Chemical mapping of a 207-nucleotide RNA with 2A3.

RNA sequence: GGGAACGACUCGAGUAGAGUCGAAAACUCAGACAACGCACAUGAUCUCGAUGAGAACCUGACCUUCAGCAAUACUGAGGUACGGAAGGACGACUACGUAAGUAAGCGUCUCCCAUAUCCUCUAGCUCCCGGAGACAUUAGCGCUUGGGACGAAAUCGAGCGUUUAUAACUUCGGUUAUAAACGCUCAAAAGAAACAACAACAACAAC
Reactivity to 2A3 in 0.01 (KOAc 150mM, MgCl2 10mM, bicine 150mM(pH8.5), 24C), signal-to-noise 2, nucleotides 027 to 156: c000u020c010a030g020a080c040a010a040c040g030c010a050c010a050u060g040a110u080c030u020c060g180a180u110g040a030g000a070a040c010c050u050g070a100c000c020u080u080c030a050g020c070a050a100u040a170c050u100g000a000g010g030u020a030c010g010g000a070a050g090g000a000c000g130a120c010u010a000c000g120u150a030a190g020u000a140a040g080c000g010u010c030u030c010c010c000a100u070a150u120c020c020u030c020u060a030g000c000u020c060c010c000g070g020a040g000a010c070a100u080u120a050g040c060g080c140u010u050g040g000g060a020c050g020a060a020a030u160c110
The 2A3 profile rests on 760 reads.